[RMDB]
RNA sequence: GGGAACGACUCGAGUAGAGUCGAAAAGAUAUGGAUUGAAUUGACAUGGAGUCUCGGAAACGAGCUCCAACAGCAAUCAAUCCUAAGUCAAAAGAGUAGACUAACGGUUCGCCGUUAGUCUACUCAAGAUUCACCAUACCUUCGGGUAUGGUGAAUCAAAAGAAACAACAACAACAAC
Reactivity to DMS in 0.01 (KOAc 150mM, MgCl2 10mM, bicine 150mM(pH8.5), 24C), signal-to-noise 2, nucleotides 027 to 126: g030a000u010a300u000g000g010a010u000u010g010a050a060u000u000g000a030c070a300u000g030g000a010g020u010c000u000c000g010g000a130a050a270c000g000a010g010c010u000c010c010a010a050c220a100g000c000a000a000u000c010a010a010u000c000c000u000a030a120g010u000c010a120a080a150a150g000a000g000u000a000g000a020c000u000a010a010c000g000g000u010u010c250g000c020c000g010u000u000a010g000u000c000u000a000c000u000c000a000a070
Reactivity to 2A3 in 0.01 (KOAc 150mM, MgCl2 10mM, bicine 150mM(pH8.5), 24C), signal-to-noise 2, nucleotides 027 to 126: g020a080u100a040u180g010g000a010u010u030g040a220a300u010u000g020a190c090a110u040g100g000a010g050u110c010u000c030g050g030a070a120a080c000g010a020g010c000u000c000c000a010a000c020a000g010c000a000a000u000c000a020a000u000c030c000u030a180a030g060u000c030a000a030a020a170g000a010g000u010a010g010a020c000u010a010a010c000g010g210u050u140c300g010c020c000g010u010u000a000g000u000c000u000a000c000u020c000a000a000